[RMDB]
RNA sequence: GGGAACGACUCGAGUAGAGUCGAAAAGAUAUGGACCCAUUUGGGAGCUGGGUCGGAAACGACACAGCGAGGAUCAAACGGGUCCUAAGUCAAAAGCCAGUGACAUCGUUCGCGAUGUCACUGGCAAGAUACAGUGAGUCUUCGGACUCACUGUAUCAAAAGAAACAACAACAACAAC
Reactivity to DMS in 0.01 (KOAc 150mM, MgCl2 10mM, bicine 150mM(pH8.5), 24C), signal-to-noise 3, nucleotides 027 to 126: g000a030u000a300u000g000g010a030c010c000c000a090u000u000u000g000g000g000a060g020c010u010g000g000g030u000c000g010g000a040a060a160c000g010a020c000a020c010a000g000c010g010a050g020g010a060u010c000a000a010a030c130g010g000g010u000c000c000u000a000a060g000u000c040a100a100a160a130g010c000c000a010g030u000g010a000c000a020u010c010g010u010u010c250g020c010g010a010u000g000u000c000a010c000u010g000g010c000a000a000
Reactivity to 2A3 in 0.01 (KOAc 150mM, MgCl2 10mM, bicine 150mM(pH8.5), 24C), signal-to-noise 1, nucleotides 027 to 126: g020a010u070a030u150g000g000a020c000c000c000a000u030u000u010g050g000g050a040g010c010u010g000g030g000u000c000g000g040a050a050a020c020g000a010c010a000c010a010g020c020g000a050g010g050a080u040c000a000a020a020c020g010g010g010u000c000c000u000a040a020g030u030c050a050a000a100a110g020c000c020a000g010u010g010a000c000a000u000c010g110u130u140c300g030c020g210a000u000g000u020c000a000c000u010g000g000c000a000a000